[RMDB]
RNA sequence: GGGAACGACUCGAGUAGAGUCGAAAAUGUGCUGUCACUGUUGCUGCUGGCGUUGGCCUCGGAAGGAAAAUUGAGGAGCUGGUCGACAAUGUGACUGCCCAAGAAGCCGCAGCCGCCUGUUACGAGGACGGAGCCCAGCUCAAGAGUAUUCAGGGUGAUCGUAACACUGAUUCGUCAGUGUUACGAUAAAAGAAACAACAACAACAAC
Reactivity to 2A3 in 0.01 (KOAc 150mM, MgCl2 10mM, bicine 150mM(pH8.5), 24C), signal-to-noise 2, nucleotides 027 to 156: u120g020u040g030c000u010g020u040c030a010c040u040g060u090u030g020c030u010g010c020u010g020g010c040g040u080u170g080g000c020c010u040c040g100g000a100a120g080g040a060a100a100a220u200u170g040a040g000g000a050g000c070u090g030g010u020c030g030a030c050a040a090u090g010u020g080a020c020u050g020c000c000c060a030a030g050a060a000g040c040c010g040c070a000g020c020c000g020c020c010u050g080u120u160a110c080g040a010g000g020a030c030g010g020a030g010c050c030c010a010g000c020u020c020a040a020g040a020g010u060a110u110u070c050a020g000g020g090u060g010
Reactivity to DMS in 0.01 (KOAc 150mM, MgCl2 10mM, bicine 150mM(pH8.5), 24C), signal-to-noise 1, nucleotides 027 to 156: u000g020u010g000c050u000g040u000c020a100c030u000g000u000u000g020c010u020g050c000u010g030g020c040g070u020u000g030g010c040c010u000c040g000g000a180a100g050g010a100a060a060a160u000u010g020a140g030g010a130g020c000u000g030g000u000c050g020a070c000a080a050u000g040u010g010a060c070u000g000c000c040c040a060a090g000a120a050g000c040c000g020c010a170g010c000c040g010c020c110u030g010u000u000a080c150g010a120g000g040a100c050g020g000a180g000c070c030c000a060g000c000u010c060a060a110g000a200g010u000a130u000u000c050a160g000g000g010u010g010